[RMDB]
RNA sequence: GGGAACGACUCGAGUAGAGUCGAAAAGCCAUCCUGAGCCGGUGGACGGGGCGGGUGGUGCUCCACGUGGUACCCUUCACCGAGGCCCAGAUCCACAUCAAUCGGCAUGCCCGGAAGAACGAGAUCAAUAUCGCAGAUGGUUCGCCAUCUGCGAUAUAAAAGAAACAACAACAACAAC
Reactivity to DMS in 0.01 (KOAc 150mM, MgCl2 10mM, bicine 150mM(pH8.5), 24C), signal-to-noise 1, nucleotides 027 to 126: g000c060c020a080u020c060c030u010g040a100g000c010c030g000g010u000g010g010a030c170g020g010g000g040c020g000g000g030u010g000g000u030g000c210u010c030c050a060c230g020u000g000g000u000a080c010c020c060u010u010c060a040c020c020g000a130g040g010c010c010c030a080g000a130u000c010c030a080c090a110u000c110a100a130u020c030g010g000c030a090u000g000c040c040c070g050g040a140a090g000a050a060c080g000a120g010a050u000c060a170
Reactivity to 2A3 in 0.01 (KOAc 150mM, MgCl2 10mM, bicine 150mM(pH8.5), 24C), signal-to-noise 1, nucleotides 027 to 126: g010c010c010a080u040c000c020u020g030a020g050c010c020g110g010u050g000g020a040c180g030g000g010g100c060g000g130g060u070g010g010u120g090c070u080c030c000a160c170g290u120g100g040u180a160c000c000c000u010u040c010a050c050c000g080a100g160g000c010c000c010a020g010a040u020c040c010a080c000a020u210c050a210a070u080c020g050g040c070a010u120g050c000c010c020g060g090a060a030g030a000a100c090g090a080g030a150u180c060a070

The record gives the reactivity of an RNA of 177 nucleotides to DMS and 2A3. Values are in units of 0.01, from 0 to 300, in steps of 10. For DMS, 790 sequencing reads were counted. The reactions ran in a buffer of 150 mM KOAc, 10 mM MgCl2 and 150 mM bicine (pH 8.5), at 24 C.